[RMDB]
RNA sequence: GGGAACGACUCGAGUAGAGUCGAAAAGAUAUGGAUGAUCUACACGUCGAAGAACUCGGAAACGAGGGAGACGGUAGUCAUCCUAAGUCAAAACCUAAGGACUGUACUUCGGUACAGUCCUUAGGAACUAAUUACUUUAGUUCGCUAAAGUAAUUAGAAAAGAAACAACAACAACAAC
Reactivity to DMS in 0.01 (KOAc 150mM, MgCl2 10mM, bicine 150mM(pH8.5), 24C), signal-to-noise 7, nucleotides 027 to 126: g010a030u000a300u000g000g000a010u000g000a010u020c010u000a010c000a120c000g040u000c000g000a110a160g010a140a200c000u000c000g010g010a110a080a210c010g010a010g010g000g000a060g010a020c000g000g010u000a000g010u000c000a000u000c000c000u000a010a070g000u000c020a100a050a110a130c000c000u000a010a010g000g000a030c000u000g000u000a000c000u000u010c210g020g000u000a000c000a010g000u000c000c000u000u000a000g000g000a020a080
Reactivity to 2A3 in 0.01 (KOAc 150mM, MgCl2 10mM, bicine 150mM(pH8.5), 24C), signal-to-noise 8, nucleotides 027 to 126: g020a020u060a050u130g010g000a010u020g000a020u090c010u040a010c300a080c150g000u010c010g160a300a070g010a070a040c000u000c000g020g040a080a060a060c010g000a000g000g000g000a030g010a000c010g000g010u010a010g000u010c000a000u000c000c000u010a090a010g050u010c020a020a030a110a200c000c000u000a010a000g010g010a000c000u010g000u010a000c010u060u210c300g030g000u000a000c000a000g000u030c000c000u000u000a000g000g000a000a000

An RNA of 177 nucleotides, treated with DMS and 2A3 and read out base by base. For DMS, 12,306 sequencing reads were counted. The reactions ran in a buffer of 150 mM KOAc, 10 mM MgCl2 and 150 mM bicine (pH 8.5), at 24 C. For DMS the reverse transcriptase was MarathonRT. Reactivities are given for positions 27 through 126. High DMS reactivity at an A or C suggests that its Watson-Crick edge is free. It was measured as part of the RMDB library TTRDEL.